[RMDB]
RNA sequence: GGGAACGACUCGAGUAGAGUCGAAAAACUCUGACCGUAAUCGCGUCUUGACUAGACUAUAGGUGACGUGAGUAUCUAUCCCAUUGUGCAUAGCGAUGGGAUAAUACGCUGAUCUAUAGUCACGGAAAGAAUCUUCUAUAUUCGUAUAGAAGAUUCUAAAAGAAACAACAACAACAAC
Reactivity to DMS in 0.01 (KOAc 150mM, MgCl2 10mM, bicine 150mM(pH8.5), 24C), signal-to-noise 9, nucleotides 027 to 126: a060c040u000c020u000g010a070c050c040g010u010a090a090u000c040g010c110g010u000c020u000u000g010a170c120u000a120g000a020c000u000a010u000a010g000g010u000g010a180c200g010u000g010a100g010u000a010u000c190u000a010u000c000c000c000a010u000u000g020u000g000c300a080u010a100g010c000g010a000u000g000g000g000a000u000a000a000u000a010c000g000c030u000g000a040u000c010u000a010u000a010g000u000c010a080c190g010g000a090a080
Reactivity to 2A3 in 0.01 (KOAc 150mM, MgCl2 10mM, bicine 150mM(pH8.5), 24C), signal-to-noise 9, nucleotides 027 to 126: a000c050u050c050u070g070a040c010c010g080u110a080a120u120c030g020c060g090u010c020u070u120g070a080c030u060a060g000a010c010u000a010u010a020g130g020u030g060a050c090g060u040g070a070g010u000a010u010c090u020a000u000c020c000c010a000u000u010g020u020g030c120a140u270a220g010c000g010a000u000g000g000g000a000u000a000a000u000a000c000g000c020u020g030a010u000c000u000a010u000a000g010u010c010a010c030g050g050a150a130